RNA sequence: GGGAACGACUCGAGUAGAGUCGAAAACAGGGCAGCCGCACCUCGUGUAGUGGAAGCAUCGCCCCCGAGGCGAGCUCGGCCGGGUACUCGCGCGGUACGGCGUUGCGCAUCUGCCACGGGUGCACCGGAACCAGCUGAUACUCGGCGGGGUCGCGUCCCGGAUUUUACAAUUCGUUGUAAAAUCCGGAAAAGAAACAACAACAACAAC
Reactivity to 2A3 in 0.01 (KOAc 150mM, MgCl2 10mM, bicine 150mM(pH8.5), 24C), signal-to-noise 2, nucleotides 027 to 156: c030a030g000g030g000c030a020g000c010c080g020c020a030c010c020u280c130g080u100g070u180a110g010u060g050g010a100a000g010c010a040u050c030g000c000c000c010c000c020g010a060g080g100c000g010a020g060c010u020c050g170g030c080c060g000g000g010u050a040c060u030c010g040c010g030c080g020g000u060a050c030g000g010c030g020u030u100g000c050g000c030a120u000c010u110g130c130c050a050c020g010g000g020u010g000c030a040c000c030g000g020a020a050c010c010a030g020c030u030g010a070u010a070c010u030c050g010g000c070g000g010g000g050u050c030g010c030g070u050c030